Source: RMDB library OK2TST, as collected in RNAgym. An RNA of 177 nucleotides, treated with DMS and 2A3 and read out base by base. The reactions ran in a buffer of 150 mM KOAc, 10 mM MgCl2 and 150 mM bicine (pH 8.5), at 24 C. Values cover nucleotides 27 to 126.
[RMDB]
RNA sequence: GGGAACGACUCGAGUAGAGUCGAAAAGACGAGCGGGAAAGGGGCAGAAACUCCGAACGAUCCGCAAGGGCAACCUGAAGCGUGUCCUUUGCCGAAGCGGGCAAGGCUAUGCCGCAGGCAAGAAUGAGCAUAAAUUUAGGUUCGCCUAAAUUUAUGCAAAAGAAACAACAACAACAAC
Reactivity to DMS in 0.01 (KOAc 150mM, MgCl2 10mM, bicine 150mM(pH8.5), 24C), signal-to-noise 7, nucleotides 027 to 126: g000a170c070g010a190g020c030g020g000g020a080a110a130g010g020g000g020c050a090g010a100a180a150c030u000c010c020g010a100a160c200g000a130u010c020c030g010c070a110a070g000g010g000c060a070a080c020c030u010g010a120a070g010c090g020u000g000u000c010c020u000u000u000g020c010c000g010a120a110g010c160g020g000g010c020a030a040g010g010c090u010a050u000g020c010c150g020c010a080g000g000c050a050a050g000a070a070u000g010a200
Reactivity to 2A3 in 0.01 (KOAc 150mM, MgCl2 10mM, bicine 150mM(pH8.5), 24C), signal-to-noise 1, nucleotides 027 to 126: g080a040c050g000a020g010c020g000g000g020a040a090a050g030g020g010g000c020a030g190a100a100a020c010u010c010c010g020a090a040c050g030a080u020c010c010g000c030a010a030g020g000g010c020a040a060c020c040u090g070a060a010g050c050g030u020g010u040c010c000u040u060u070g000c010c010g050a140a030g070c120g020g040g000c040a050a020g110g000c020u040a050u110g010c010c000g010c030a020g000g000c010a010a010g050a040a080u210g030a030